[RMDB]
RNA sequence: GGGAACGACUCGAGUAGAGUCGAAAAUUCAGAGUGACCAGUCACAAUCUGGCCUUACCUUCGCAUCAAGAGGUACCAACAUGGAGGAUGAGGCGGACCAAUACUUUUCACAUGAUGAUCCAAGCAGACGACUUGUCGCGUUCGCGCGACAAGUCGUAAAAGAAACAACAACAACAAC
Reactivity to 2A3 in 0.01 (KOAc 150mM, MgCl2 10mM, bicine 150mM(pH8.5), 24C), signal-to-noise 1, nucleotides 027 to 126: u070u000c000a020g060a070g060u000g000a080c020c020a000g060u110c050a060c060a100a100u030c000u000g170g020c030c000u000u120a060c000c000u000u040c000g000c050a160u020c170a210a020g020a040g200g150u050a090c010c010a060a140c000a150u110g000g020a000g120g010a260u060g030a000g010g010c000g000g000a000c010c010a000a000u010a070c000u020u000u010u010c010a040c030a060u150g030a040u110g010a020u000c000c020a080a000g030c000a000g120